[RMDB]
RNA sequence: GGGAACGACUCGAGUAGAGUCGAAAAUGGUGGUGUUCGCACCACCAAAAAUCCUAAGUCUCUCAUCGAUCUCCAGCAGGCGAAGAACUGUCGGAAACGACAGGGAGCCUGACUGGAGGGAGAGAGAUAUGGAAAAACUCGUCGCUUCGGCGACGAGGAAGAGUAUGGUGUUCGCACCAUACUCUUCAAAAGAAACAACAACAACAAC
Reactivity to DMS in 0.01 (KOAc 150mM, MgCl2 10mM, bicine 150mM(pH8.5), 24C), signal-to-noise 2, nucleotides 027 to 156: u000g020g040u010g000g020u000g010u010u030c270g050c040a000c000c010a000c000c000a000a000a020a070a060u010c000c000u000a070a200g010u020c000u010c000u010c010a300u000c090g020a080u000c000u000c010c010a020g030c010a010g010g000c000g000a140a130g010a090a090c000u000g040u010c010g010g000a160a100a180c000g010a020c010a020g010g020g010a300g000c020c000u000g010a060c010u000g010g000a000g000g010g000a040g020a030g000a000g010a000u000a090u000g000g000a060a110a050a080a260c000u000c010g030u000c010g050c010u000u010c220g030g030c010g000a010c010g000a010g000
Reactivity to 2A3 in 0.01 (KOAc 150mM, MgCl2 10mM, bicine 150mM(pH8.5), 24C), signal-to-noise 3, nucleotides 027 to 156: u050g000g010u020g000g000u010g010u020u030c120g060c070a030c000c010a020c000c000a010a010a000a000a000u070c040c010u060a110a020g010u000c000u000c000u000c000a210u170c090g060a080u040c010u000c000c000a000g000c000a000g000g000c020g090a180a010g020a080a030c010u010g000u010c000g040g060a140a040a040c010g000a000c000a010g010g000g020a000g000c000c000u020g020a090c000u000g000g030a000g000g000g000a020g000a000g000a010g000a000u020a050u080g010g040a050a030a030a030a040c010u000c000g010u000c010g020c010u060u030c190g110g010c000g000a000c020g000a010g000